This 177-nucleotide RNA was probed chemically with DMS and 2A3.

RNA sequence: GGGAACGACUCGAGUAGAGUCGAAAAGAUUGCGGCUUCGGCCGCAAUCAAAGGACUACCCGUCAGGGUAAAGGCCAUACGGACAGCCGGGUCCACUGCCGAAAAUCUCCAACUUCGGUUGGAGAAAUCUAUCUCAAUUCUUCGGAAUUGAGAUAGAAAAAGAAACAACAACAACAAC
Reactivity to DMS in 0.01 (KOAc 150mM, MgCl2 10mM, bicine 150mM(pH8.5), 24C), signal-to-noise 2, nucleotides 027 to 126: g010a010u000u000g030c000g050g020c010u000u020c240g060g040c000c000g010c010a010a010u000c000a050a120a130g000g000a040c000u000a030c010c010c000g000u010c230a080g000g010g010u000a020a090a080g010g020c010c030a040u010a100c080g000g000a030c020a140g010c010c010g010g000g000u000c010c000a140c160u020g000c010c000g000a280a070a090a090u000c000u000c000c000a010a000c000u000u010c190g050g010u010u010g000g000a000g000a010a010a050
Reactivity to 2A3 in 0.01 (KOAc 150mM, MgCl2 10mM, bicine 150mM(pH8.5), 24C), signal-to-noise 1, nucleotides 027 to 126: g000a010u000u010g000c020g030g000c040u080u120c280g130g020c010c000g020c000a000a000u010c000a000a020a020g010g000a010c000u010a010c010c020c000g110u100c080a080g000g000g000u100a190a110a190g000g010c020c010a030u050a040c030g030g000a000c000a010g030c000c000g010g000g030u000c000c000a010c040u060g000c010c000g020a050a010a000a040u010c000u000c000c000a010a000c000u060u090c230g100g000u010u000g000g000a000g000a020a000a010
For 2A3, 2,033 sequencing reads were counted.